[RMDB]
RNA sequence: GGGAACGACUCGAGUAGAGUCGAAAACCUCGUAGUGCACAUUCCUUUAACGCUUCAAAAUCUGUAAAGCACGCCAUAUCGCCGAAAGGCACACUUAAUUAUUAAAGGUAAUACACUAUGUCCGGUAUGAUAUACACGGAUUCGUCCGUGUAUAUCAAAAAGAAACAACAACAACAAC
Reactivity to DMS in 0.01 (KOAc 150mM, MgCl2 10mM, bicine 150mM(pH8.5), 24C), signal-to-noise 6, nucleotides 027 to 126: c010c000u000c020g020u000a010g030u000g000c080a070c230a140u010u000c010c000u000u010u000a030a050c230g020c080u010u010c120a050a070a110a110u030c090u010g020u010a080a040a070g010c010a070c130g000c060c050a060u010a080u020c100g010c020c010g000a090a090a150g010g020c000a080c190a050c080u010u000a050a080u010u030a140u000u000a010a010a020g000g000u000a030a030u000a090c020a010c020u000a010u000g000u010c030c030g000g010u000a080
Reactivity to 2A3 in 0.01 (KOAc 150mM, MgCl2 10mM, bicine 150mM(pH8.5), 24C), signal-to-noise 9, nucleotides 027 to 126: c000c000u010c010g010u020a000g000u010g020c050a060c010a110u030u050c000c000u020u020u050a130a030c070g050c030u070u070c090a070a090a090a300u080c080u110g110u240a080a040a020g020c020a030c060g020c020c010a110u100a070u220c110g010c030c010g060a070a030a040g020g090c000a010c000a000c020u150u220a130a130u180u210a090u040u060a050a020a000g020g000u020a020a010u060a070c010a000c020u010a010u020g060u070c050c020g070g020u110a080
Chemical mapping of a 177-nucleotide RNA with DMS and 2A3. It was measured as part of the RMDB libraries RFM100 and RFMREP. DMS adducts were read by reverse transcription with MarathonRT.